[RMDB]
RNA sequence: GGGAACGACUCGAGUAGAGUCGAAAACUAGCCUGGUCAGCUAGAUUUACACGAUGUCAUACUCAUCGUGAUGACCUGAUAAGCGCGUAUUAUUAGAAGGGUUAGGGAACGCGCACCCACCCAUAGAGGAUCUAGCUAGGUUCGCCUAGCUAGAUCCAAAAGAAACAACAACAACAAC
Reactivity to 2A3 in 0.01 (KOAc 150mM, MgCl2 10mM, bicine 150mM(pH8.5), 24C), signal-to-noise 1, nucleotides 027 to 126: c010u000a010g000c000c030u030g040g030u020c000a000g000c000u000a040g020a240u060u110u110a010c020a000c010g000a000u020g010u060c060a090u110a270c040u000c070a000u000c010g010u000g020a070u030g000a000c000c000u030g110a120u040a170a000g000c000g020c020g020u130a060u240u000a090u010u120a230g120a220a080g070g030g010u060u120a070g100g000g000a040a010c010g000c010g000c000a080c010c000c000a000c020c040c000a080u070a040g140a070
Reactivity to DMS in 0.01 (KOAc 150mM, MgCl2 10mM, bicine 150mM(pH8.5), 24C), signal-to-noise 1, nucleotides 027 to 126: c000u000a010g000c000c000u000g000g010u000c050a300g000c000u010a050g000a040u000u030u020a220c000a000c020g040a000u010g040u000c220a300u040a190c220u000c000a000u000c030g000u000g010a070u010g010a200c010c000u020g000a040u010a040a060g000c000g010c020g020u000a000u000u000a160u000u000a060g030a130a190g010g000g000u000u000a200g010g000g000a020a030c060g010c020g010c020a300c000c020c000a050c040c000c040a160u000a130g010a260